[RMDB]
RNA sequence: GGGAACGACUCGAGUAGAGUCGAAAAAAUAUUACUGGGAAUGAGGUUCUCCCAGGAACGAGAUAGAAAUAGCUAAAUCUUUCGUUCAUAACCGCUUGAUUAUAAAGCUGAUGACUUCUGCAAAGCGGUUGAAGGCGAAUUUCGAUUCGCCUUCAACAAAAGAAACAACAACAACAAC
Reactivity to DMS in 0.01 (KOAc 150mM, MgCl2 10mM, bicine 150mM(pH8.5), 24C), signal-to-noise 2, nucleotides 027 to 126: a070a100u000a060u030u020a140c010u000g000g050g000a020a010u000g030a040g020g010u000u030c030u000c000c040c000a000g000g000a000a010c000g000a010g000a030u000a080g000a010a080a080u020a140g040c140u060a080a070a150u000c010u000u010u000c010g000u000u000c000a170u000a000a000c060c000g000c000u000u000g000a090u020u080a180u060a110a110a020g000c000u020g000a300u020g000a100c070u000u000c010u000g000c070a060a080a080g000c070g000
Reactivity to 2A3 in 0.01 (KOAc 150mM, MgCl2 10mM, bicine 150mM(pH8.5), 24C), signal-to-noise 3, nucleotides 027 to 126: a040a010u300a090u140u090a030c010u010g000g000g020a000a020u010g040a060g080g020u180u200c050u000c000c000c000a000g000g020a000a000c030g000a010g020a070u050a080g220a040a160a060u120a030g100c080u110a110a110a090u030c000u010u050u020c000g010u010u020c000a010u020a070a000c010c010g010c000u010u020g040a030u100u200a110u210a090a060a020g000c000u000g000a000u020g010a010c020u010u020c000u000g000c010a040a060a010g180c130g080
The data come from the RNA Mapping Database (RMDB), library RFM100. Chemical mapping of a 177-nucleotide RNA with DMS and 2A3. 2A3 adducts were read by reverse transcription with SuperScript II with manganese. The RNA was probed in 150 mM KOAc, 10 mM MgCl2 and 150 mM bicine (pH 8.5) at 24 C.